[RMDB]
RNA sequence: GGGAACGACUCGAGUAGAGUCGAAAACCGUAGGUGUUCGAUAAGAUACUAGCCACAACAGCGCUCCUUCGAAAGAGGGAGCGACAUGUGGCUGUAUCUUUUGACGAACACCUAAACGGAAAACAACCAAGCACUGCUUCGGCAGUGCUUGGUUGAACUCAUACUGAUAGUUCGCUAUCAGUAUGAGAAAAGAAACAACAACAACAAC
Reactivity to DMS in 0.01 (KOAc 150mM, MgCl2 10mM, bicine 150mM(pH8.5), 24C), signal-to-noise 1, nucleotides 027 to 156: c000c010g000u000a000g010g020u000g040u010u000c000g010a180u000a030a060g000a060u000a020c010u000a090g040c000c000a010c000a040a060c040a110g000c000g000c010u000c000c010u000u000c010g000a130a130a300g020a050g000g000g000a020g050c000g060a000c020a210u010g010u020g010g010c000u000g000u010a000u010c020u000u000u000u000g020a300c160g010a000a000c000a000c000c010u000a000a020a050c020g010g000a120a100a120a150c020a040a030c000c000a020a050g000c010a030c010u010g010c000u000u020c300g080g090c040a030g070u000g000c010u000u010g000g000u000u000g020a010a130
Reactivity to 2A3 in 0.01 (KOAc 150mM, MgCl2 10mM, bicine 150mM(pH8.5), 24C), signal-to-noise 2, nucleotides 027 to 156: c000c000g000u000a020g000g000u010g020u010u000c030g010a030u010a060a000g000a000u010a020c170u240a040g010c010c000a010c010a090a070c050a110g030c000g010c000u010c000c010u010u010c000g040a150a090a080g000a010g000g000g000a000g010c000g010a010c000a010u040g000u000g000g000c000u000g000u000a000u000c000u000u000u010u020g050a020c000g010a000a000c020a010c000c000u000a010a000a000c000g040g010a000a050a010a140c010a000a000c000c000a000a000g000c000a000c010u010g030c020u070u140c240g090g000c020a000g000u000g000c000u010u000g010g000u000u000g000a000a000